[RMDB]
This 177-nucleotide RNA was probed chemically with 2A3 and DMS.
RNA sequence: GGGAACGACUCGAGUAGAGUCGAAAAUUGGCAAUUGGAUCUUUGAUAGUGCCCUUGAGUUUAGAGCGUGCAAGAUCAGCCCUACAGGGUAAGAGUGUUGAAGCCAUACCAUUGACAACUGCAUGUGCAUCGUGGUACUCUUCGGAGUACCACGAUGAAAAGAAACAACAACAACAAC
Reactivity to 2A3 in 0.01 (KOAc 150mM, MgCl2 10mM, bicine 150mM(pH8.5), 24C), signal-to-noise 2, nucleotides 027 to 126: u070u010g040g000c040a050a150u040u150g050g010a040u060c090u010u160u000g020a070u080a130g100u030g000c000c000c030u020u050g100a110g070u050u090u140a140g050a020g070c060g030u040g070c070a050a020g040a050u150c010a000g000c000c000c000u070a090c070a050g070g000g000u040a140a020g100a070g160u050g040u040u050g020a090a010g050c040c000a000u020a090c000c000a090u090u140g010a040c010a070a000c070u100g000c090a030u100g010u070g090
Reactivity to DMS in 0.01 (KOAc 150mM, MgCl2 10mM, bicine 150mM(pH8.5), 24C), signal-to-noise 1, nucleotides 027 to 126: u000u020g010g000c110a030a110u000u040g010g030a070u010c000u000u000u070g020a070u020a010g010u000g000c010c020c000u000u060g000a120g030u030u000u000a040g000a130g000c010g000u000g000c000a020a040g000a040u050c070a140g000c030c000c000u010a060c180a050g010g030g000u120a010a010g000a150g000u020g000u060u010g010a000a140g020c080c030a100u030a180c010c030a140u000u000g000a080c080a050a080c010u000g000c040a030u020g030u000g000
It was measured as part of the RMDB library OK1LIB. Values cover nucleotides 27 to 126.